[RMDB]
RNA sequence: GGGAACGACUCGAGUAGAGUCGAAAAGAAGAAAAAGAAACACGCGAACCUGGCAAAGGACGCAGAGCCAAGAGCGUGAUAAACGCAGAAAGAUCUGUGGCCAAAAGCGAGAAGAACUCGCAAGAAACAUCAUACGGCAGUUCGCUGCCGUAUGAUGAAAAGAAACAACAACAACAAC
Reactivity to DMS in 0.01 (KOAc 150mM, MgCl2 10mM, bicine 150mM(pH8.5), 24C), signal-to-noise 3, nucleotides 027 to 126: g000a040a110g010a050a100a050a070a070g000a060a100a120c110a080c150g000c000g000a040a040c070c000u000g000g020c020a020a120a130g000g020a050c000g000c020a050g000a070g000c040c030a030a120g000a220g000c000g030u010g000a130u060a050a030a000c020g000c000a040g030a060a160a120g000a100u000c000u000g020u000g000g000c020c020a040a070a110a090g000c000g000a010g000a180a060g000a100a100c070u000c000g040c000a040a110g020a130a080a080
Reactivity to 2A3 in 0.01 (KOAc 150mM, MgCl2 10mM, bicine 150mM(pH8.5), 24C), signal-to-noise 3, nucleotides 027 to 126: g060a060a030g080a000a040a000a000a000g140a020a090a000c060a020c030g030c000g000a050a090c010c000u030g070g000c040a060a120a150g070g010a020c030g010c030a010g040a010g110c080c010a060a010g040a000g030c000g000u040g000a020u130a010a100a000c000g000c040a020g120a050a050a000g040a040u000c000u010g010u010g030g000c000c000a020a130a020a010g000c010g010a000g030a130a000g050a070a050c000u010c000g000c030a010a020g050a010a080a020
Record summary
Chemical mapping of a 177-nucleotide RNA with DMS and 2A3. It was measured as part of the RMDB library OK1LIB. Values cover nucleotides 27 to 126. For 2A3, 3,089 sequencing reads were counted. 2A3 adducts were read by reverse transcription with SuperScript II with manganese. For DMS the reverse transcriptase was MarathonRT.